Background:
This 207-nucleotide RNA was probed chemically with 2A3. Conditions: 150 mM KOAc, 10 mM MgCl2 and 150 mM bicine (pH 8.5), 24 C.
RNA sequence: GGGAACGACUCGAGUAGAGUCGAAAAAAAGCCGCAAAGUUAUAGUUGCAAACGACGAUAACUACGCUCUAGCCGCUUAAUGCCGCUAGCCAUCUACCACACGCUUUGCACAUGGGCAGUGGAUUUGAUGGUCAUCUCACAUCGUGCUAGCGAGGGACAAUGCUGCAGACUUCGGUCUGCAGCAUUGAAAAGAAACAACAACAACAAC
Reactivity to 2A3 in 0.01 (KOAc 150mM, MgCl2 10mM, bicine 150mM(pH8.5), 24C), signal-to-noise 1, nucleotides 027 to 156: a000a000a000g020c000c010g040c030a140a090a000g000u030u060a060u030a080g020u040u000g050c160a160a240a060c070g010a030c000g020a030u020a050a000c010u010a030c170g020c000u000c010u010a000g000c000c000g000c030u060u210a080a000u280g030c010c010g000c030u000a000g000c020c000a030u000c010u080a030c000c000a000c000a060c100g020c010u000u000u110g000c090a030c000a040u050g000g000g000c010a000g000u030g070g000a090u280u070u180g040a040u000g000g010u000c080a100u020c070u010c020a030c010a060u080c190g040u050g010c000u110a100g010c020g010a100g020g050g010a020